[RMDB]
RNA sequence: GGGAACGACUCGAGUAGAGUCGAAAAGAUAUGGAGACCCAUCCAGCGAUGAGUCGGAAACGACGAGCUGGUGGUGUCUCCUAAGUCAAAACCUCUUCUGUCCCUCUUCGGAGGGACAGAAGAGGAACCUGAUAGUACAGUUCGCUGUACUAUCAGGAAAAGAAACAACAACAACAAC
Reactivity to 2A3 in 0.01 (KOAc 150mM, MgCl2 10mM, bicine 150mM(pH8.5), 24C), signal-to-noise 3, nucleotides 027 to 126: g010a020u080a030u170g000g000a010g010a010c010c000c020a040u220c030c010a000g010c030g230a300u250g110a090g050u010c020g020g020a100a070a070c020g010a000c020g020a030g020c000u010g000g000u010g000g020u130g000u020c000u000c000c010u010a030a000g040u010c020a010a010a110a220c000c000u000c000u010u010c000u010g020u000c040c040c000u010c020u040u050c290g150g000a040g000g010g010a000c000a010g010a000a000g000a000g010g000a000a000
Reactivity to DMS in 0.01 (KOAc 150mM, MgCl2 10mM, bicine 150mM(pH8.5), 24C), signal-to-noise 3, nucleotides 027 to 126: g010a010u000a300u010g000g010a010g000a020c020c010c010a020u020c020c000a000g010c010g000a140u020g030a250g010u000c000g020g000a130a070a200c000g010a010c000g000a150g010c000u000g010g030u000g000g000u010g010u000c010u010c000c010u010a010a060g010u010c030a100a070a090a170c010c000u000c010u000u000c000u010g010u010c000c000c000u000c000u000u030c180g030g020a050g000g010g010a000c000a000g010a020a000g000a000g000g000a010a010
Chemical mapping of a 177-nucleotide RNA with 2A3 and DMS. The data come from the RNA Mapping Database (RMDB), library TTRDEL. Reactivities are given for positions 27 through 126. The 2A3 profile rests on 7,981 reads.